[RMDB]
RNA sequence: GGGAACGACUCGAGUAGAGUCGAAAAACGAACGAGUGAACGAACACACUCGUACUCACACACACACUCGAACGUGAUCGUUCACACGAACGUACUCGUGUGAGUGUACGAUCACACGAGAGAACUCUCUCGAGAUCACACUCGAACACGAACACACAUGAAAGGAUUCGUUCGCGAAUCCUUUCAUAAAAGAAACAACAACAACAAC
Reactivity to 2A3 in 0.01 (KOAc 150mM, MgCl2 10mM, bicine 150mM(pH8.5), 24C), signal-to-noise 3, nucleotides 027 to 156: a000c100g020a020a000c010g000a000g010u020g020a030a000c060g060a140a010c050a000c000a010c050u010c000g010u060a050c050u170c030a030c000a020c000a000c000a010c000a000c110u090c040g040a150a050c100g010u020g000a080u010c000g000u030u040c010a000c020a000c020g030a130a010c020g080u090a050c020u010c000g010u000g010u020g000a030g010u100g100u120a060c060g000a000u010c000a030c000a020c000g000a010g000a000g040a080a030c000u000c000u000c000u000c070g020a030g030a150u000c030a000c030a010c040u050c020g080a090a050c090a030c150g060a170a030c120a020c070a030c050

The data come from the RNA Mapping Database (RMDB), library OK3TST. An RNA of 207 nucleotides, treated with 2A3 and read out base by base. Values cover nucleotides 27 to 156. Conditions: 150 mM KOAc, 10 mM MgCl2 and 150 mM bicine (pH 8.5), 24 C.